[RMDB]
RNA sequence: GGGAACGACUCGAGUAGAGUCGAAAAUGAACAUCAGUCAGGGUUCUCUGGUCUUCUUACCAUGCAUGGGAUGCCUCAUGCCGGGCUGCUGUGGUGGCAUGCCUUGCUGUGGGGGCAUUAUGCUGCCGUAAUCAUCCCAGUUCGCUGGGAUGAUUACAAAAGAAACAACAACAACAAC
Reactivity to DMS in 0.01 (KOAc 150mM, MgCl2 10mM, bicine 150mM(pH8.5), 24C), signal-to-noise 1, nucleotides 027 to 126: u010g010a090a070c080a170u000c050a040g020u010c050a050g010g010g020u000u000c040u000c030u000g010g000u000c100u010u000c050u010u000a160c040c030a080u000g020c020a030u000g010g010g020a040u000g010c030c010u000c010a040u030g010c010c030g000g010g010c030u010g020c020u020g050u000g030g010u020g020g030c000a030u020g000c000c000u010u000g020c010u020g030u010g020g000g000g000g000c000a010u000u000a020u000g010c050u000g020c100c160
Reactivity to 2A3 in 0.01 (KOAc 150mM, MgCl2 10mM, bicine 150mM(pH8.5), 24C), signal-to-noise 1, nucleotides 027 to 126: u060g010a080a040c000a090u130c030a030g090u050c040a010g010g000g080u130u070c070u000c010u010g020g030u000c050u080u020c000u030u080a050c040c040a110u120g000c020a010u030g080g020g140a000u040g020c020c000u020c000a000u050g000c000c020g000g020g000c010u010g000c020u050g040u150g120g110u120g000g000c010a020u140g000c000c030u020u030g050c020u030g030u160g110g010g000g010g000c000a010u020u010a000u040g000c000u040g060c030c040